The record gives the reactivity of an RNA of 177 nucleotides to DMS. Values cover nucleotides 27 to 126. For DMS the reverse transcriptase was MarathonRT.
RNA sequence: GGGAACGACUCGAGUAGAGUCGAAAAUUGUUAGAAACUUUUUCAAAUCGAGGAUUUUGAGACUAGAAUGCUUGAAUUGUACUAGCAUACUGGCCCCCAAAUCUUCGCUUAGAAAUACAGUUCACAAGGUAUACAGGUAGUUCGCUACCUGUAUACCAAAAGAAACAACAACAACAAC
Reactivity to DMS in 0.01 (KOAc 150mM, MgCl2 10mM, bicine 150mM(pH8.5), 24C), signal-to-noise 1, nucleotides 027 to 126: u000u020g020u010u000a230g020a130a030a020c020u000u000u000u000u000c020a070a100a120u000c000g000a010g010g020a000u000u000u000u000g030a050g020a020c020u000a020g000a150a020u000g010c010u030u000g000a170a230u010u000g000u020a110c010u010a020g010c020a000u000a100c020u000g000g000c020c000c020c040c060a010a010a010u000c010u000u000c000g030c060u000u000a200g020a000a020a010u000a030c130a050g010u000u000c010a070c170a060a080